[RMDB]
RNA sequence: GGGAACGACUCGAGUAGAGUCGAAAAGGCCACCAUCGACACCCACUCACCGCGGCAGACUUUCUACUUCGAUGGUGACGGUCUGCUUCGCCGCCAUGACUAUGUACCCGAGGUGAUCGGACACUGGACGAUCCUGCGGGUUCGCCCGCAGGAUCGUAAAAGAAACAACAACAACAAC
Reactivity to DMS in 0.01 (KOAc 150mM, MgCl2 10mM, bicine 150mM(pH8.5), 24C), signal-to-noise 1, nucleotides 027 to 126: g000g000c030c010a120c090c060a050u000c070g000a120c130a050c050c030c000a080c010u080c050a070c140c000g000c110g040g010c040a010g000a030c030u000u000u000c030u030a070c030u000u030c070g040a050u030g050g030u000g000a090c040g000g000u000c050u040g040c040u020u020c010g000c000c000g000c020c090a000u040g000a070c150u010a100u040g030u030a100c000c020c000g000a040g050g000u000g000a080u000c030g000g000a050c130a130c070u050g020g020
Reactivity to 2A3 in 0.01 (KOAc 150mM, MgCl2 10mM, bicine 150mM(pH8.5), 24C), signal-to-noise 3, nucleotides 027 to 126: g070g000c040c010a000c020c000a080u080c010g010a020c020a040c030c000c010a030c010u040c000a050c000c000g030c020g060g000c040a000g020a040c010u040u060u060c030u140a220c040u080u120c110g170a170u180g000g030u030g030a010c030g000g000u000c040u050g010c000u020u080c000g000c010c000g000c020c000a090u090g040a090c040u170a050u160g050u040a100c020c000c020g030a080g000g070u150g020a070u030c020g040g000a040c040a040c100u070g000g090
An RNA of 177 nucleotides, treated with DMS and 2A3 and read out base by base. The DMS profile rests on 1,553 reads. Source: RMDB library OK1LIB, as collected in RNAgym. For 2A3, 1,689 sequencing reads were counted. For 2A3 the reverse transcriptase was SuperScript II with manganese.